[RMDB]
RNA sequence: GGGAACGACUCGAGUAGAGUCGAAAAAUAAACCGGAAGCGACGGAGCAAGCCCGACCGGAAGGGCAACCGGAACCCGGAUCUCAACCCGGUUGGGACGCACCUGAGAGACGGGAAUGCGUAAAAAAGAGUUCUUAUUAGUUCGCUAAUAAGAACUCAAAAGAAACAACAACAACAAC
Reactivity to DMS in 0.01 (KOAc 150mM, MgCl2 10mM, bicine 150mM(pH8.5), 24C), signal-to-noise 2, nucleotides 027 to 126: a050u000a070a050a160c010c000g000g020a170a230g040c060g000a230c280g000g020a100g020c050a130a120g000c000c020c000g000a030c020c000g020g020a130a180g000g000g030c070a030a060c000c010g000g000a100a090c140c030c000g010g000a120u000c000u010c010a110a120c230c010c000g000g010u000u000g000g000g000a040c040g000c040a060c050c020u000g010a200g020a090g000a100c090g000g000g000a060a070u010g010c080g020u010a010a020a040a080a050a080
Reactivity to 2A3 in 0.01 (KOAc 150mM, MgCl2 10mM, bicine 150mM(pH8.5), 24C), signal-to-noise 2, nucleotides 027 to 126: a020u110a030a040a010c000c020g010g030a150a020g120c040g090a090c130g080g080a070g000c040a020a060g070c040c010c000g010a010c000c010g000g000a050a060g060g000g010c050a070a030c010c000g060g000a110a140c050c020c000g060g080a100u020c020u000c010a050a120c010c000c000g000g000u030u050g030g000g020a030c000g000c000a040c000c010u040g000a050g000a010g010a090c040g040g000g070a020a150u120g000c030g020u140a110a040a000a010a010a050